RNA sequence: GGGAACGACUCGAGUAGAGUCGAAAAGGUACGCAAGAUUUUAGCGCGGAAGACUUGCGCAAGAUGGAAAAGAAAAUUCAUGAUUCAGGCGAAAUGACAAAGCUAAUCAUGCAAAAGGUUGUCGAGCGUGCGCAAACACGAAACGGCGUGUUAAUUACUAACCGUACUUCUUCGGAAGUACGGUUAGAAAAGAAACAACAACAACAAC
Reactivity to 2A3 in 0.01 (KOAc 150mM, MgCl2 10mM, bicine 150mM(pH8.5), 24C), signal-to-noise 2, nucleotides 027 to 156: g070g000u030a000c000g000c000a000a080g000a030u070u050u040u120a110g030c010g010c000g060g000a060a000g020a080c000u030u010g000c050g000c080a040a020g080a050u160g020g030a020a110a030a040g140a010a060a030a040u050u060c000a020u000g000a000u050u070c060a010g070g020c070g020a050a080a050u230g030a090c060a050a040a000g020c000u020a020a000u000c020a000u010g060c110a090a110a010a000g100g000u070u010g000u040c050g030a040g030c030g030u130g020c010g000c020a040a110a030c010a000c000g120a060a180a020c020g080g000c010g000u000g020u060u000a070a030u100u110a080
Reactivity to DMS in 0.01 (KOAc 150mM, MgCl2 10mM, bicine 150mM(pH8.5), 24C), signal-to-noise 1, nucleotides 027 to 156: g040g020u000a000c040g020c020a020a110g020a220u000u020u000u010a030g060c030g020c090g000g060a040a050g010a090c000u010u000g000c000g000c060a030a070g040a170u000g010g010a180a110a110a110g000a100a050a040a090u000u000c000a000u000g020a000u000u000c130a120g050g000c000g050a030a090a170u010g010a170c160a040a130a280g020c020u000a030a010u000c000a000u000g040c300a010a050a170a150g000g000u010u000g000u000c040g010a110g030c020g000u010g000c030g040c050a130a050a070c010a000c000g010a070a090a120c170g020g010c020g050u000g000u000u020a060a120u000u000a150
Annotation
This 207-nucleotide RNA was probed chemically with 2A3 and DMS. The reactions ran in a buffer of 150 mM KOAc, 10 mM MgCl2 and 150 mM bicine (pH 8.5), at 24 C. For DMS the reverse transcriptase was MarathonRT. Values cover nucleotides 27 to 156.